[RMDB]
RNA sequence: GGGAACGACUCGAGUAGAGUCGAAAAGAUAUGGAAGGACCCGUAGGGAGCUCAGGGAUCGGAAACGAUCCCGAGCUUUGAUCUAUCGUGGUCCUUCCUAAGUCAAAGACCAUGUUCGCAUGGUCAACGACAAUGUUGUGUUCGCACAACAUUGUCGAAAAGAAACAACAACAACAAC
Reactivity to DMS in 0.01 (KOAc 150mM, MgCl2 10mM, bicine 150mM(pH8.5), 24C), signal-to-noise 1, nucleotides 027 to 126: g000a040u000a300u010g000g020a040a000g000g000a030c000c000c000g040u050a010g000g000g000a010g000c000u000c010a140g040g010g010a040u000c010g000g000a080a160a170c000g000a010u000c000c000c020g020a000g020c000u000u010u020g010a020u010c010u010a020u000c020g020u030g050g000u000c000c000u000u000c000c000u010a000a090g000u000c030a160a250a180g000a040c000c000a010u000g000u000u000c200g030c030a000u000g010g000u000c010a040a090